Chemical mapping of a 177-nucleotide RNA with DMS and 2A3. DMS adducts were read by reverse transcription with MarathonRT. 2A3 is a SHAPE reagent: it acylates the 2'-hydroxyl of flexible nucleotides of all four kinds. High DMS reactivity at an A or C suggests that its Watson-Crick edge is free. Source: RMDB library TTRDES, as collected in RNAgym. Conditions: 150 mM KOAc, 10 mM MgCl2 and 150 mM bicine (pH 8.5), 24 C. The DMS profile rests on 1,236 reads.
RNA sequence: GGGAACGACUCGAGUAGAGUCGAAAAGAUAUGGAUCCGUAUACUUCUUUGAUCAAACUCGGAAACGAGUUUGGGAGAAGGUACCGGAUCCUAAGUCAAAGCUCACAAGACUUCGGUCUUGUGAGCACGUCAAUCCAAUGUUCGCAUUGGAUUGACGAAAAGAAACAACAACAACAAC
Reactivity to DMS in 0.01 (KOAc 150mM, MgCl2 10mM, bicine 150mM(pH8.5), 24C), signal-to-noise 2, nucleotides 027 to 126: g000a120u000a300u010g010g000a000u000c000c020g000u030a120u010a170c010u000u000c020u000u000u030g000a170u020c000a000a000a010c000u000c030g000g000a140a120a180c000g010a000g010u000u000u010g010g000g050a180g030a040a040g020g010u010a150c300c030g060g000a020u010c020c020u010a030a030g000u020c030a070a100a140g010c000u010c000a070c020a010a000g070a030c010u020u010c270g040g010u010c000u010u000g000u000g010a010g000c000a020
Reactivity to 2A3 in 0.01 (KOAc 150mM, MgCl2 10mM, bicine 150mM(pH8.5), 24C), signal-to-noise 2, nucleotides 027 to 126: g030a000u100a060u110g000g000a020u000c010c030g080u080a170u070a300c030u040u040c020u300u300u090g120a150u110c000a020a010a020c010u000c010g150g000a050a040a040c020g060a010g000u020u000u000g000g020g000a020g010a020a020g000g010u030a060c120c130g060g000a000u010c000c000u010a060a000g020u000c090a300a000a000g040c010u000c000a000c000a010a000g010a020c010u150u300c300g060g000u010c010u000u000g000u040g020a000g010c000a000